[RMDB]
RNA sequence: GGGAACGACUCGAGUAGAGUCGAAAAGGAUUACAGCUGGGCCAUUGGUCAGAAAAGGACACUGUAUAUCCACAAGCCUCCUUCUAUUGGUCAGUGUGAAUUUGGUCUUCUAAACUGCUAUUUAAAGAUCAACAAUGACAUUCGUGUCAUUGUUGAUAAAAGAAACAACAACAACAAC
Reactivity to DMS in 0.01 (KOAc 150mM, MgCl2 10mM, bicine 150mM(pH8.5), 24C), signal-to-noise 6, nucleotides 027 to 126: g020g010a040u000u000a020c030a020g020c290u000g010g010g020c000c010a130u010u010g020g030u000c150a140g000a070a070a090a090g010g000a100c050a060c010u010g000u000a050u010a030u000c020c030a090c180a090a140g010c050c020u000c070c030u000u010c070u000a090u010u010g010g010u010c030a030g010u000g010u000g000a040a080u000u000u000g010g000u000c050u000u000c050u010a030a040a060c040u000g010c110u000a090u000u000u000a030a090a090g010
Reactivity to 2A3 in 0.01 (KOAc 150mM, MgCl2 10mM, bicine 150mM(pH8.5), 24C), signal-to-noise 4, nucleotides 027 to 126: g000g000a020u000u030a030c010a000g060c150u050g050g130g190c040c030a140u090u170g100g040u170c070a040g180a070a120a010a020g030g000a000c010a000c020u010g010u040a030u030a020u150c010c000a020c020a030a020g040c000c020u030c010c000u070u110c050u070a140u070u090g020g000u050c020a030g010u000g040u020g090a050a040u030u040u080g000g000u010c000u020u000c030u050a060a070a080c020u060g030c020u030a100u080u180u070a150a160a010g120